[RMDB]
RNA sequence: GGGAACGACUCGAGUAGAGUCGAAAAGACUGCGUGCACUUGAGACGAUAUCGAGCCGGAAAUUAAUCGAUAAUGUCUCAUGUAGUGGAUACGAUCCGGCAAGUAUCGACUACUUGUGCUCGUAGGAGGCUGCAUGGAUAUUCGUAUCCAUGCAGCCAAAAGAAACAACAACAACAAC
Reactivity to 2A3 in 0.01 (KOAc 150mM, MgCl2 10mM, bicine 150mM(pH8.5), 24C), signal-to-noise 3, nucleotides 027 to 126: g100a020c000u000g000c020g020u000g000c000a000c020u010u010g000a000g000a000c010g020a060u020a000u100c000g010a030g010c000c000g030g080a090a090a090u300u200a070a190u140c010g000a000u030a040a120u120g040u010c010u000c030a000u120g010u020a040g010u000g110g000a010u000a000c000g000a010u000c000c000g000g000c030a070a030g010u010a020u030c060g030a010c020u060a030c000u020u040g000u000g000c000u000c030g000u010a000g000g010a100